[RMDB]
RNA sequence: GGGAACGACUCGAGUAGAGUCGAAAACUUUCUCGAGCUCCUCCGCCUUUUUCCUUGCUGUGAUCCAUUUCUCGAGGGUCUCCUCCCUUGUUCCCCUUCGUCCUCUCCUCGUCUCGGAUUGGCUCAUAACCACCAGCCUUCGGGCUGGUGAAAAGAAACAACAACAACAAC
Reactivity to 2A3 in 0.01 (KOAc 150mM, MgCl2 10mM, bicine 150mM(pH8.5), 24C), signal-to-noise 3, nucleotides 027 to 129: c040u040u070u000c030u010c000g000a010g000c050u020c010c020u000c010c000g050c000c060u040u080u030u080u050c020c000u010u040g050c040u060g010u060g090a060u020c000c020a060u050u080u020c030u040c040g060a120g000g020g000u000c010u000c010c010u040c010c000c000u020u090g000u010u020c000c000c000c000u030u030c020g040u020c000c030u030c000u030c000c000u000c000g090u000c030u000c020g010g050a050u020u030g000g000c000u010c080a110u110a080a020c020
Reactivity to DMS in 0.01 (KOAc 150mM, MgCl2 10mM, bicine 150mM(pH8.5), 24C), signal-to-noise 5, nucleotides 027 to 129: c150u000u000u020c030u000c050g030a090g050c060u020c060c060u050c070c040g030c050c030u000u000u000u000u000c070c000u010u030g020c010u050g010u030g040a070u040c050c050a140u050u020u020c040u030c050g030a120g040g020g030u010c050u030c040c030u030c020c020c050u010u110g010u000u000c020c010c010c080u020u020c060g030u000c080c000u030c000u070c030c020u000c050g030u040c020u040c050g070g030a130u060u030g000g030c150u030c100a090u040a170a150c070

This 170-nucleotide RNA was probed chemically with 2A3 and DMS. For DMS, 11,726 sequencing reads were counted. The data come from the RNA Mapping Database (RMDB), library 15KLIB.